RNA sequence: GGGAACGACUCGAGUAGAGUCGAAAAGGGGUCUCGCUCAAGCUGCGAGAUAUGGAACUACAGCUGAAGCCUCCACGGCUGCCAUAUCGAUGAGCAGCUGAGCGAGACGGAGGCACCCAAAGAUCCUCGUAAUAGAUUCGUCUAUUACGAGGAUCAACCCUGAGGAUGGAUUCGUCCAUCCUCAGGGAAAAGAAACAACAACAACAAC
Reactivity to 2A3 in 0.01 (KOAc 150mM, MgCl2 10mM, bicine 150mM(pH8.5), 24C), signal-to-noise 1, nucleotides 027 to 156: g060g000g000g040u010c010u010c000g000c000u000c010a100a100g010c000u000g040c000g070a220g010a080u010a000u010g030g000a100a160c110u150a070c300a000g000c010u040g000a020a000g010c000c000u000c000c020a030c030g000g000c000u010g000c000c000a000u000a000u000c070g140a300u180g050a110g020c000a000g000c000u000g000a000g000c000g000a000g000a000c010g010g000a000g010g000c000a050c020c010c010a150a100a000g000a010u010c000c000u020c000g000u000a000a000u010a020g000a030u040u070c240g040u050c190u020a000u000u030a000c020g010a000g000g000a000u020c000a000a000
Overview:
An RNA of 207 nucleotides, treated with 2A3 and read out base by base. It was measured as part of the RMDB library RNAMAK. The reactions ran in a buffer of 150 mM KOAc, 10 mM MgCl2 and 150 mM bicine (pH 8.5), at 24 C. For 2A3 the reverse transcriptase was SuperScript II with manganese.